RNA sequence: GGGAACGACUCGAGUAGAGUCGAAAAGUUGUCCUCGCAAUUCUCUCUGGAACCACAACUAAUGUUGACAAAAUACGCCAGCUUCUCAAAGGUGUCACCCUUGACAAGUUGCGUGAUUAUUUAGCUGAAAGGGAGUUGUUCGCAACUCCCAAAAGAAACAACAACAACAAC
Reactivity to DMS in 0.01 (KOAc 150mM, MgCl2 10mM, bicine 150mM(pH8.5), 24C), signal-to-noise 1, nucleotides 027 to 129: g030u000u030g000u020c000c000u040c090g000c100a000a000u080u020c000u020c000u020c070u010g000g020a010a100c000c130a160c120a020a140c090u000a090a060u060g020u000u000g040a000c010a080a000a020a040u000a040c060g000c080c090a080g030c030u000u030c160u000c070a040a070a030g000g090u000g020u030c240a100c100c000c010u000u000g000a000c120a090a000g020u000u040g000c000g070u000g030a160u050u000a000u000u050u080a100g010c080u000g020a020a160a000
Reactivity to 2A3 in 0.01 (KOAc 150mM, MgCl2 10mM, bicine 150mM(pH8.5), 24C), signal-to-noise 2, nucleotides 027 to 129: g050u020u020g040u000c020c030u040c000g000c030a060a130u010u020c000u000c000u000c020u060g000g010a000a010c010c000a060c030a100a000c080u110a170a000u190g020u050u030g000a040c050a040a060a000a000u030a000c000g020c000c020a000g000c000u010u010c000u000c000a060a070a000g000g000u050g040u170c030a040c010c010c000u000u000g000a000c000a000a000g000u000u000g050c110g010u000g000a020u000u050a000u050u060u040a060g030c070u010g030a050a000a060

The record gives the reactivity of an RNA of 170 nucleotides to DMS and 2A3.
The data come from the RNA Mapping Database (RMDB), library 15KLIB.
Reactivities are given for positions 27 through 129.